[RMDB]
RNA sequence: GGGAACGACUCGAGUAGAGUCGAAAAUGUCACACAGUAGCGAGGGAUGCAAUUAAUUGCAUCUACACCAAGCUCAAGGCUUGGAUUUCGACUAGUGUCGAGUCGUUCCGACUCGCUACGCCCACAAUAAUUGAUGAGUCUUCGGACUCAUCAAUUAAAAAGAAACAACAACAACAAC
Reactivity to DMS in 0.01 (KOAc 150mM, MgCl2 10mM, bicine 150mM(pH8.5), 24C), signal-to-noise 3, nucleotides 027 to 126: u000g030u020c180a090c150a150c120a090g030u000a010g020c000g010a030g010g000g000a010u000g000c000a010a050u000u000a100a070u000u000g010c000a010u000c000u000a090c120a180c020c010a020a000g000c000u010c210a170a120g020g010c000u010u020g000g000a230u000u000u000c010g000a010c000u010a020g020u010g020u000c000g000a000g000u000c000g000u000u000c000c000g010a010c010u000c010g000c000u000a010c030g000c040c020c020a070c150a080a050